[RMDB]
An RNA of 177 nucleotides, treated with DMS and read out base by base. Reactivities are given for positions 27 through 126. DMS adducts were read by reverse transcription with MarathonRT. The RNA was probed in 150 mM KOAc, 10 mM MgCl2 and 150 mM bicine (pH 8.5) at 24 C. The DMS profile rests on 887 reads.

RNA sequence: GGGAACGACUCGAGUAGAGUCGAAAAAUGUACUGCUUUAUCGGACAUUGAAGUUAUUCAUAAAGAUGUUGAAGGAGCCUUCUAUCACGUUCGCUAUCCACUGGUAGAUGGCGAGGGCAAUGAUGCAGCCCGGUUUUAUAUUCGUAUAAAACCGGGCAAAAGAAACAACAACAACAAC
Reactivity to DMS in 0.01 (KOAc 150mM, MgCl2 10mM, bicine 150mM(pH8.5), 24C), signal-to-noise 1, nucleotides 027 to 126: a050u010g010u020a110c030u000g030c040u000u020u000a120u000c090g000g010a070c030a070u000u010g020a110a100g020u000u000a110u000u000c010a030u020a130a100a160g010a060u000g020u000u000g030a010a050g010g010a300g010c050c010u000u010c010u010a030u000c000a060c130g010u010u000c070g030c150u000a040u030c030c110a120c090u010g030g010u000a040g000a000u000g010g020c030g000a220g000g000g020c080a010a050u010g020a090u010g000c070a130